[RMDB]
RNA sequence: GGGAACGACUCGAGUAGAGUCGAAAACAAAACGGAAGAGCUCAUGAUUCUGCUGACGCAGACGCAGUAAUGCGGCGGUGACAUACUGAUUCACCUGCCCGUUCAGCCAACUCUCUUCGCGCGAGAAGGAUACGAGCGCGUUCGCGCGCUCGUAUCCAAAAGAAACAACAACAACAAC
Reactivity to 2A3 in 0.01 (KOAc 150mM, MgCl2 10mM, bicine 150mM(pH8.5), 24C), signal-to-noise 3, nucleotides 027 to 126: c020a000a070a000a000c020g030g030a030a010g000a010g010c040u040c110a130u110g020a220u140u080c000u000g030c050u090g040a110c150g000c050a010g000a120c040g010c020a040g090u190a010a080u090g030c010g040g000c000g010g010u030g020a000c020a040u260a140c100u170g070a300u030u010c000a020c000c010u050g020c010c020c000g010u080u010c000a010g070c040c000a040a050c030u020c000u010c010u050u040c000g100c020g020c060g130a100g010a170a110
Reactivity to DMS in 0.01 (KOAc 150mM, MgCl2 10mM, bicine 150mM(pH8.5), 24C), signal-to-noise 2, nucleotides 027 to 126: c110a020a010a030a190c070g000g000a000a010g000a010g100c190u000c270a250u000g000a050u020u000c010u000g000c000u000g000a090c110g000c000a030g030a020c220g000c050a030g000u040a010a040u000g000c280g010g020c020g000g030u000g030a040c300a160u040a090c290u010g000a080u010u040c000a010c040c050u000g070c010c000c070g000u000u000c130a120g000c000c190a080a050c180u000c050u000c000u000u000c000g000c060g010c190g000a250g000a180a040
This 177-nucleotide RNA was probed chemically with 2A3 and DMS. The DMS profile rests on 1,692 reads. For DMS the reverse transcriptase was MarathonRT. Values are in units of 0.01, from 0 to 300, in steps of 10. Source: RMDB library OK1LIB, as collected in RNAgym.